[RMDB]
RNA sequence: GGGAACGACUCGAGUAGAGUCGAAAAGAGCCCAAGUAGGAAUCUGUGUGAUCACUGUUCUUUUGCCAAGACACGGGGUGGACAAUAAGAUUCCUUUACAAAGCACUGGUGUAAGUGUUCGCCUGGUAUCGAGUAGUUAUUUCGAUAACUACUCGAUAAAAGAAACAACAACAACAAC
Reactivity to 2A3 in 0.01 (KOAc 150mM, MgCl2 10mM, bicine 150mM(pH8.5), 24C), signal-to-noise 5, nucleotides 027 to 126: g110a030g060c000c000c010a030a030g130u080a010g020g020a010a010u010c020u000g040u000g040u020g130a080u070c030a030c120u050g040u090u040c020u020u050u070u130g110c060c050a040a000g010a010c050a010c120g110g020g010g000u050g050g040a030c010a050a090u080a070a000g000a000u010u000c000c000u010u010u010a030c030a030a090a010g050c040a030c140u090g060g000u090g060u220a100a110g030u020g000u090u050c020g030c000c030u050g040g000u020
Reactivity to DMS in 0.01 (KOAc 150mM, MgCl2 10mM, bicine 150mM(pH8.5), 24C), signal-to-noise 7, nucleotides 027 to 126: g010a190g020c000c010c010a090a100g020u010a030g000g010a020a010u000c000u000g010u010g000u010g000a090u010c010a070c010u000g000u000u010c000u000u000u010u040g000c270c190a040a030g010a030c190a040c060g010g000g000g010u000g000g010a030c020a040a060u010a080a040g000a030u000u000c000c000u000u010u030a060c100a100a130a090g000c090a060c070u010g010g010u010g000u020a050a080g010u000g010u010u000c100g020c090c020u000g000g020u010